[RMDB]
RNA sequence: GGGAACGACUCGAGUAGAGUCGAAAAUACCUGGUUCGCCAGGUAAAAAAAGCGUACUACCAAUGCGACGCCACAAGCCGAGUUCGUCCCAAAUAGGACGAAUAUCUUGUGGAACUACGUCCAUUGGUAUCGCAAAAAAACCGGUUUCGACCGGUAAUCCCAUAAUGUAGUUCGCUACAUUAUGGGAAAAAGAAACAACAACAACAAC
Reactivity to DMS in 0.01 (KOAc 150mM, MgCl2 10mM, bicine 150mM(pH8.5), 24C), signal-to-noise 3, nucleotides 027 to 156: u000a050c000c010u000g010g010u010u000c300g030c020c020a020g010g020u020a010a000a030a100a020a040a090g000c000g030u000a100c170u000a040c010c000a020a020u000g010c120g020a020c000g000c000c000a040c030a010a040g000c210c060g000a260g020u000u010c000g020u010c000c000c020a070a120a190u010a060g000g000a010c010g010a040a010u010a040u000c010u000u000g020u000g040g010a060a120c050u000a300c020g000u000c010c010a050u000u010g000g030u000a000u000c020g010c000a000a010a100a080a040a090a070c000c000g020g010u000u000u010c250g010a090c010c000g000g030u010a000a050
Reactivity to 2A3 in 0.01 (KOAc 150mM, MgCl2 10mM, bicine 150mM(pH8.5), 24C), signal-to-noise 3, nucleotides 027 to 156: u060a010c020c010u050g000g020u070u040c110g090c070c030a020g000g000u070a090a010a000a000a000a000a020g040c040g000u080a070c030u020a010c020c000a010a000u050g050c230g030a000c000g020c000c010a000c000a020a030g020c130c110g140a050g190u000u000c000g000u010c010c010c040a100a170a070u210a050g010g000a000c010g000a000a000u050a090u050c000u000u010g010u020g000g020a010a000c050u190a060c070g020u000c000c000a000u000u000g000g000u000a000u000c000g010c000a100a000a000a000a090a000a040c010c000g000g070u020u070u070c210g090a030c000c000g000g000u000a020a060